[RMDB]
Chemical mapping of a 177-nucleotide RNA with 2A3 and DMS. The reactions ran in a buffer of 150 mM KOAc, 10 mM MgCl2 and 150 mM bicine (pH 8.5), at 24 C.
RNA sequence: GGGAACGACUCGAGUAGAGUCGAAAAUUUUUGGAGAGUUUGAUCUUGGCUCAGGACGAACGCUGGCGGCGUGCCUAAUACAUGCAAGUCGAGCGCUGGAAGCUAAUUUCAUCCCUUCGGGAUGAAACUCUCAAGACGAAUUCGUUCGUCUUGAGAGAAAAGAAACAACAACAACAAC
Reactivity to 2A3 in 0.01 (KOAc 150mM, MgCl2 10mM, bicine 150mM(pH8.5), 24C), signal-to-noise 1, nucleotides 027 to 126: u100u040u050u070u060g040g010a110g030a040g050u000u140u250g080a050u030c040u030u030g080g000c000u000c050a040g000g070a050c110g080a160a040c010g010c020u000g060g020c010g060g000c000g000u030g040c030c000u080a070a000u150a150c040a030u030g020c010a020a080g030u030c050g120a020g030c010g020c060u030g020g030a050a000g020c020u030a090a150u000u040u020c010a020u020c020c050c000u090u220c300g000g000g000a000u010g010a000a000a000
Reactivity to DMS in 0.01 (KOAc 150mM, MgCl2 10mM, bicine 150mM(pH8.5), 24C), signal-to-noise 2, nucleotides 027 to 126: u020u000u000u000u010g020g000a080g000a080g020u000u000u020g010a050u000c040u020u000g040g030c010u000c050a110g010g020a080c100g000a070a100c040g010c050u000g040g020c040g000g000c020g020u000g000c040c080u000a110a100u010a130c080a050u000g010c020a040a070g040u000c020g010a060g000c070g000c040u000g000g010a080a060g000c080u010a050a220u000u000u000c010a010u000c010c000c020u010u000c200g010g020g010a000u010g000a020a060a060

Notes
DMS adducts were read by reverse transcription with MarathonRT. The data come from the RNA Mapping Database (RMDB), library OK2TRN.